RNA sequence: GGGAACGACUCGAGUAGAGUCGAAAAUGGUUACCAAGGAGAUUCAGUUCAACAAUAACUUCAGUGGAUUCCUAUAAACUCAUUAUUACGUAUGGCCCUUUGGAAACAUUUUUUGAAAAUCAUUUGUUGCCAAAUGUUUAAUUAUUAACAGCACAUAUACCCCUAAUGGUUUCGACCAUUAGGGGUAAAAAGAAACAACAACAACAAC
Reactivity to DMS in 0.01 (KOAc 150mM, MgCl2 10mM, bicine 150mM(pH8.5), 24C), signal-to-noise 1, nucleotides 027 to 156: u000g020g000u000u020a170c060c010a090a120g020g000a100g020a050u000u000c080a100g000u010u000c030a010a110c070a090a150u010a080a110c070u020u000c050a130g000u000g020g010a160u000u000c030c040u000a220u000a020a070a020c040u000c020a100u000u000a100u020u010a060c100g070u020a060u010g000g030c020c000c030u000u020u000g000g020a080a080a100c030a010u000u000u000u000u000u040g000a100a120a030a170u010c120a140u000u010u000g000u010u000g020c000c020a000a050a100u000g000u010u000u000a020a220u000u010a100u000u000a070a060c050a130g000c060a070c060a110u000a190
The record gives the reactivity of an RNA of 207 nucleotides to DMS. It was measured as part of the RMDB library OK3TST. The RNA was probed in 150 mM KOAc, 10 mM MgCl2 and 150 mM bicine (pH 8.5) at 24 C. The DMS profile rests on 1,489 reads. Values cover nucleotides 27 to 156.